An RNA of 177 nucleotides, treated with DMS and read out base by base. For DMS the reverse transcriptase was MarathonRT. It was measured as part of the RMDB library TTRINS.
RNA sequence: GGGAACGACUCGAGUAGAGUCGAAAAGAUAUGGAGAGUCGGGAGAGGUCCCGAUCGAAGAACGAGCUUAAUUCGGAAACGAAUUAAGCUCGGGAGAUCGGUCCUCGAAGAACGACUCUCCUAAGUCCUUAAUAUCGGACUUCGGUCCGAUAUUAAGAAAAGAAACAACAACAACAAC
Reactivity to DMS in 0.01 (KOAc 150mM, MgCl2 10mM, bicine 150mM(pH8.5), 24C), signal-to-noise 1, nucleotides 027 to 126: g010a160u030a260u000g010g010a030g000a030g030u000c000g010g000g030a190g010a010g000g020u000c300c030c030g000a000u000c000g010a070a190g000a170a300c010g000a000g000c020u000u010a000a010u000u000c010g030g000a200a070a190c000g000a040a010u010u000a010a010g020c000u000c030g000g000g000a060g010a020u000c010g010g000u020c010c030u000c000g000a080a170g010a100a170c020g010a010c010u000c010u000c010c000u000a010a130g010u020c020